[RMDB]
RNA sequence: GGGAACGACUCGAGUAGAGUCGAAAAGAUAUGGAAGUGAACUACAGCGGGGAGACGCGUUGAAAGUUACAGAAUCGGAAACGAUUCUGUAACUGGAGCGUUGAAAGACGCUGCACUUCCUAAGUCACGACCUACACUUGUUCGCAAGUGUAGGUCGAAAAGAAACAACAACAACAAC
Reactivity to DMS in 0.01 (KOAc 150mM, MgCl2 10mM, bicine 150mM(pH8.5), 24C), signal-to-noise 1, nucleotides 027 to 126: g000a030u010a300u000g000g000a030a010g070u000g010a110a090c130u010a280c010a050g010c000g040g180g000g000a300g010a030c070g030c000g020u020u000g020a070a220a010g000u000u000a010c000a010g030a000a010u000c000g030g000a070a100a190c000g010a000u020u000c000u010g000u000a000a010c000u000g030g020a090g010c000g000u010u010g000a100a140a190g010a170c030g010c020u010g030c000a030c000u000u000c010c000u000a020a060g030u000c040a300

An RNA of 177 nucleotides, treated with DMS and read out base by base. Source: RMDB library TTRINS, as collected in RNAgym. Reactivities are given for positions 27 through 126. DMS (dimethyl sulfate) methylates the pairing face of unpaired adenines and cytosines. The RNA was probed in 150 mM KOAc, 10 mM MgCl2 and 150 mM bicine (pH 8.5) at 24 C. The DMS profile rests on 827 reads.